[RMDB]
RNA sequence: GGGAACGACUCGAGUAGAGUCGAAAACUAGUCUGUCAGACCGGGAACGCCCUCGGCCCGGACCCUGGCAUCAGCUAGAGGGAUCCACCGAUGAGUCCGGUCGCGGGACUCCUCGGGACAACCACAGCGACUGGGAUCGUCAUCUCGGCUAGUUCGCCCAAGUUUACUUGUUCGCAAGUAAACUUGGAAAAGAAACAACAACAACAAC
Reactivity to 2A3 in 0.01 (KOAc 150mM, MgCl2 10mM, bicine 150mM(pH8.5), 24C), signal-to-noise 1, nucleotides 027 to 156: c010u030a040g100u070c060u060g030u020c030a020g010a080c000c020g010g000g030a060a040c030g040c030c040c030u010c030g050g020c000c000c000g000g030a060c080c000c000u000g020g020c040a180u070c060a060g130c030u160a060g010a050g030g020g020a020u090c110c080a040c000c010g000a010u020g000a000g000u010c000c000g000g040u050c050g000c000g040g000g010a000c000u010c000c010u010c010g000g010g000a020c030a030a050c140c060a030c040a070g020c000g030a010c030u060g000g060g000a050u080c080g080u070c120a090u020c030u020c010g030g000c030u040a030g030u070u080c050g030c000